Chemical mapping of a 177-nucleotide RNA with 2A3 and DMS. For 2A3, 8,018 sequencing reads were counted.
RNA sequence: GGGAACGACUCGAGUAGAGUCGAAAAGAUAUGGAUCCAGAAAGCAUCGAUCGUAACAAGUGGUCGGAAACGACCACCGCCCGGGAGCUUUCCUGGAUCCUAAGUCAAAGUCGCGUUCGCGCGACAACUGUAGAAAUCAGUUCGCUGAUUUCUACAGAAAAGAAACAACAACAACAAC
Reactivity to 2A3 in 0.01 (KOAc 150mM, MgCl2 10mM, bicine 150mM(pH8.5), 24C), signal-to-noise 3, nucleotides 027 to 126: g020a000u060a020u130g000g000a000u000c000c010a000g010a020a010a000g000c010a090u300c070g120a080u140c050g090u150a150a100c080a270a120g010u000g000g010u010c010g010g030a070a040a020c000g010a000c000c000a000c010c000g060c010c050c000g000g050g030a150g000c000u030u020u000c110c040u000g000g000a010u000c000c000u010a030a010g000u000c020a120a050a090g000u010c010g020c010g030u060u080c300g000c010g000c010g090a000c010a000a010
Reactivity to DMS in 0.01 (KOAc 150mM, MgCl2 10mM, bicine 150mM(pH8.5), 24C), signal-to-noise 5, nucleotides 027 to 126: g000a050u000a300u010g010g000a000u000c000c000a010g010a040a000a010g020c010a280u000c110g010a100u020c040g000u010a080a090c150a190a090g000u000g000g010u000c000g020g010a050a060a110c010g010a010c010c000a000c010c080g000c300c170c010g000g000g010a040g010c000u000u000u000c140c060u010g010g000a010u000c010c000u000a010a060g010u000c020a080a100a190g000u000c010g000c000g010u000u010c190g020c020g030c010g010a010c010a020a030
Reactivities are given for positions 27 through 126. The RNA was probed in 150 mM KOAc, 10 mM MgCl2 and 150 mM bicine (pH 8.5) at 24 C. The data come from the RNA Mapping Database (RMDB), library TTRDEL. For DMS the reverse transcriptase was MarathonRT.